[RMDB]
RNA sequence: GGGAACGACUCGAGUAGAGUCGAAAAAACUACGGCUGGCCCAGGGACCUGCCCCGGGCGGUGGGUCAGUAGGGCGCGCAGUUCGGCCAUCGGCGCCGCUGCUGGUAGCCUGCUACCGAUCAGGGGCACAACACAAUACGUUCGCGUAUUGUGUUGUAAAAGAAACAACAACAACAAC
Reactivity to DMS in 0.01 (KOAc 150mM, MgCl2 10mM, bicine 150mM(pH8.5), 24C), signal-to-noise 2, nucleotides 027 to 126: a080a070c050u000a050c050g010g010c000u000g020g010c020c000c020a140g010g010g000a070c060c030u000g000c000c010c010c050g000g000g000c070g020g010u000g010g010g000u000c020a030g020u000a070g030g000g000c020g010c090g000c020a040g010u000u010c090g020g000c020c030a240u010c120g010g010c070g040c000c020g020c020u000g020c050u000g010g020u010a090g010c010c020u010g000c130u020a080c050c020g020a090u010c100a150g020g000g000g000c050
Reactivity to 2A3 in 0.01 (KOAc 150mM, MgCl2 10mM, bicine 150mM(pH8.5), 24C), signal-to-noise 1, nucleotides 027 to 126: a010a010c100u160a050c020g120g020c020u010g070g020c020c000c000a050g050g040g050a110c010c000u020g010c000c020c030c040g070g010g030c030g050g020u030g020g000g030u030c000a030g030u130a090g060g010g000c070g000c030g000c000a000g030u200u220c030g020g000c030c030a190u280c110g200g060c140g000c050c000g020c000u020g000c030u050g010g120u050a070g000c000c010u030g020c010u090a070c030c020g080a110u060c050a070g010g010g010g000c010